Record summary: The record gives the reactivity of an RNA of 207 nucleotides to DMS and 2A3. For DMS the reverse transcriptase was MarathonRT. The data come from the RNA Mapping Database (RMDB), library RNAMAK. The 2A3 profile rests on 3,222 reads. For 2A3 the reverse transcriptase was SuperScript II with manganese.

RNA sequence: GGGAACGACUCGAGUAGAGUCGAAAAACUGUCUUUCGAGACAGUAAGACGGCGUACUACAGGGCACGAAUCCGAUAAGACUUUCCCAAAUAGGAAAGUCUUUUGACGGAUUCCGUGAACUACCCUGUAUCGCAAUUAACUGCUGUUCGCAGCAGAAUUCACUAUUAGGGUUCGCCCUAAUAGUGAAAAAAGAAACAACAACAACAAC
Reactivity to DMS in 0.01 (KOAc 150mM, MgCl2 10mM, bicine 150mM(pH8.5), 24C), signal-to-noise 3, nucleotides 027 to 156: a030c000u000g000u000c000u000u000u000c190g020a060g040a020c010a020g000u000a030a070g020a140c090g000g020c020g010u020a090c070u000a000c010a010g020g000g000c000a070c020g000a020a010u000c000c000g030a160u000a030a010g010a040c000u000u000u000c000c000c010a060a160a290u000a060g030g010a030a010a020g010u000c000u000u000u010u000g020a230c090g000g010a020u000u000c020c070g050u010g020a110a220c070u000a040c000c000c000u000g010u000a000u000c010g000c020a110a050u000u010a050a170c060u000g020c000u000g020u010u000c230g030c030a030g000c030a060g000a090a130
Reactivity to 2A3 in 0.01 (KOAc 150mM, MgCl2 10mM, bicine 150mM(pH8.5), 24C), signal-to-noise 3, nucleotides 027 to 156: a000c000u000g010u000c010u010u200u100c210g010a050g000a020c020a000g000u020a050a000g140a020c140g030g010c000g000u070a010c000u000a000c000a000g000g020g020c010a000c000g020a000a000u000c010c010g010a010u020a050a000g000a000c020u000u030u040c000c010c050a200a240a140u240a100g000g000a000a000a000g000u000c030u000u000u010u080g130a020c010g020g000a000u010u000c080c050g000u000g000a070a030c030u190a100c090c000c010u000g000u030a000u060c000g010c000a010a030u140u120a130a090c010u000g010c000u020g060u150u110c300g010c100a000g040c000a000g010a020a080